Structure probing data (DMS) for a 177-nucleotide construct. The reactions ran in a buffer of 150 mM KOAc, 10 mM MgCl2 and 150 mM bicine (pH 8.5), at 24 C. The DMS profile rests on 2,265 reads.
RNA sequence: GGGAACGACUCGAGUAGAGUCGAAAAGAUAUGGAUGAACCAUAUUCCAAUGUAGCUUUUGACGCGAACGGUAUCGGAAACGAUACCCUUCGCGAUAAGCUAAUUGGAAUAUGGUUCAUCCUAAGUCCGAUUGGUAUUGGUUCGCCAAUACCAAUCGAAAAGAAACAACAACAACAAC
Reactivity to DMS in 0.01 (KOAc 150mM, MgCl2 10mM, bicine 150mM(pH8.5), 24C), signal-to-noise 2, nucleotides 027 to 126: g020a090u020a300u000g000g000a020u000g020a010a010c000c000a020u000a010u000u010c000c000a000a010u000g010u010a010g000c010u020u000u000u010g000a260c050g010c010g010a010a020c300g000g010u000a000u010c010g010g000a140a080a210c000g030a020u000a000c000c010c020u000u010c010g050c000g010a040u000a010a020g030c000u000a020a000u000u000g000g010a040a000u000a000u000g000g000u000u000c000a000u000c010c000u010a020a050g010u000c030